[RMDB]
RNA sequence: GGGAACGACUCGAGUAGAGUCGAAAAGCAAAAAUGGAGCCUGAGACUUUUACUCUAAUUAAGGACACAGAGGUCAUCAACGUCUAUCCUUUGAGCUACUCAGUCACUUUAAGUGGUGACUGGUACAUAAUUCACCCCUGUUCGCAGGGGUGAAUUAAAAAGAAACAACAACAACAAC
Reactivity to 2A3 in 0.01 (KOAc 150mM, MgCl2 10mM, bicine 150mM(pH8.5), 24C), signal-to-noise 1, nucleotides 027 to 126: g000c000a000a230a160a000a140u130g090g060a030g070c000c010u050g020a020g050a110c040u090u190u140u160a080c010u000c000u000a070a150u240u090a100a130g120g000a010c010a000c000a060g090a040g020g060u110c080a050u060c070a050a090c050g050u000c000u070a070u010c000c020u040u030u130g060a040g040c000u000a000c030u070c140a000g020u030c000a040c020u120u130u300a300a300g240u100g170g000u000g000a000c010u000g010g000u000a010c000a060
Reactivity to DMS in 0.01 (KOAc 150mM, MgCl2 10mM, bicine 150mM(pH8.5), 24C), signal-to-noise 1, nucleotides 027 to 126: g020c050a000a020a070a140a090u000g010g000a050g040c010c030u010g020a190g010a070c020u000u010u010u000a100c060u010c030u000a070a090u020u010a070a080g010g010a060c050a080c190a020g010a030g000g040u000c050a030u010c100a040a090c040g030u000c080u010a110u000c010c030u000u010u000g000a180g010c160u010a000c050u030c000a020g000u010c020a000c000u000u010u000a020a070g030u010g010g030u000g000a000c010u000g010g030u010a010c050a170

Annotation: The record gives the reactivity of an RNA of 177 nucleotides to 2A3 and DMS. For 2A3, 542 sequencing reads were counted. Values cover nucleotides 27 to 126. The reactions ran in a buffer of 150 mM KOAc, 10 mM MgCl2 and 150 mM bicine (pH 8.5), at 24 C.